[RMDB]
RNA sequence: GGGAACGACUCGAGUAGAGUCGAAAAUUGCUGAUGCCGUGGCUUCAGCGCUCGGAAACGCUGGAAUCUUGCUGUGUGCUGGCUGUGUCCUUGCGACGAGCCACUCGACUUGGCGCGUACCGGUUUGACACAGCGACAGCUUCGGCUGUCGCUGUGUAAAAGAAACAACAACAACAAC
Reactivity to 2A3 in 0.01 (KOAc 150mM, MgCl2 10mM, bicine 150mM(pH8.5), 24C), signal-to-noise 1, nucleotides 027 to 126: u140u060g040c000u020g030a120u080g000c030c050g080u130g030g000c000u110u050c030a030g030c000g050c020u000c020g080g150a030a050a020c020g000c020u060g020g060a090a070u060c040u050u110g020c090u010g000u010g000u040g210c030u030g080g000c030u020g020u020g010u090c020c000u020u240g060c060g000a030c000g000a000g020c020c000a030c020u020c030g110a130c030u030u080g000g040c020g040c030g070u010a090c000c050g070g060u040u130u080g000
Reactivity to DMS in 0.01 (KOAc 150mM, MgCl2 10mM, bicine 150mM(pH8.5), 24C), signal-to-noise 1, nucleotides 027 to 126: u000u010g000c010u000g020a050u010g020c030c150g020u010g040g000c030u000u000c040a030g010c020g000c120u000c100g030g030a100a100a100c100g020c000u000g010g000a030a060u010c050u010u000g020c070u000g040u010g010u000g000c090u000g010g000c020u020g020u010g000u000c020c060u010u000g050c070g010a040c040g000a030g000c020c000a020c050u000c110g010a070c040u000u000g020g010c010g020c140g000u000a130c040c030g020g010u020u010u000g000